[RMDB]
RNA sequence: GGGAACGACUCGAGUAGAGUCGAAAAGGGGUCCACAGCAAUGCUCCGUGGAGUACGAGGAUCACGCUGAAGCCUCCACGGCGUGGGAGUACGAUGAAACGGAGCGACUGUGGACGGAGGCACCCAAAAGUUAGUGCAGAUUCGUCUGCACUAACAACAAAAUAGUUCCGUUCGCGGAACUAUUUUGAAAAGAAACAACAACAACAAC
Reactivity to 2A3 in 0.01 (KOAc 150mM, MgCl2 10mM, bicine 150mM(pH8.5), 24C), signal-to-noise 5, nucleotides 027 to 156: g120g030g080g010u010c010c000a000c010a010g080c120a120a290u250g000c000u000c000c000g020u010g000g020a020g000u000a000c000g020a190g150g000a010u000c000a000c000g000c010u030g030a110a020g020c000c000u010c010c000a010c000g010g000c000g000u000g010g000g000a020g000u000a000c030g180a300u020g000a010a010a000c010g000g040a000g000c000g000a000c000u000g010u000g010g000a000c000g000g000a000g000g000c010a040c000c000c000a050a130a010a030g000u000u000a000g000u000g000c000a000g010a050u020u060c160g110u010c110u000g000c000a000c000u000a000a000c000a000a000
Reactivity to DMS in 0.01 (KOAc 150mM, MgCl2 10mM, bicine 150mM(pH8.5), 24C), signal-to-noise 2, nucleotides 027 to 156: g010g010g000g040u000c010c010a000c000a020g060c060a060a080u020g010c030u000c010c010g040u000g010g000a080g030u000a000c010g010a190g010g000a060u000c010a040c000g040c010u000g010a050a120g010c050c000u010c000c020a300c030g000g060c000g040u000g000g000g000a070g020u000a030c030g030a130u010g020a200a250a040c010g000g000a020g030c010g010a000c010u010g000u000g010g010a030c020g020g010a030g090g030c100a250c000c020c020a110a060a110a190g000u000u000a000g010u000g020c000a010g000a090u000u010c290g030u000c000u010g000c000a010c010u000a000a010c000a090a190